[RMDB]
RNA sequence: GGGAACGACUCGAGUAGAGUCGAAAAGAUAUGGAUGAUUCAUCCUCGACAACAGCUCGGAAACGAGACAUGUCGUCGAUGAGAUCAUCCUAAGUCAAACAAGACCAUUGUUCGCAAUGGUCUUGAAUCGGGAAUACAUCUUCGGAUGUAUUCCCGAAAAAGAAACAACAACAACAAC
Reactivity to DMS in 0.01 (KOAc 150mM, MgCl2 10mM, bicine 150mM(pH8.5), 24C), signal-to-noise 2, nucleotides 027 to 126: g010a100u000a300u010g010g020a010u000g000a010u000u000c000a040u000c010c020u020c000g000a000c000a030a060c300a140g000c010u000c000g000g000a130a060a190c020g000a000g000a020c110a190u000g010u000c000g020u000c210g000a020u010g000a050g000a000u000c000a000u010c000c000u000a030a060g010u000c030a160a120a290c000a010a000g000a010c000c010a020u010u010g000u000u050c200g060c020a010a020u000g000g000u000c000u000u000g040a040a090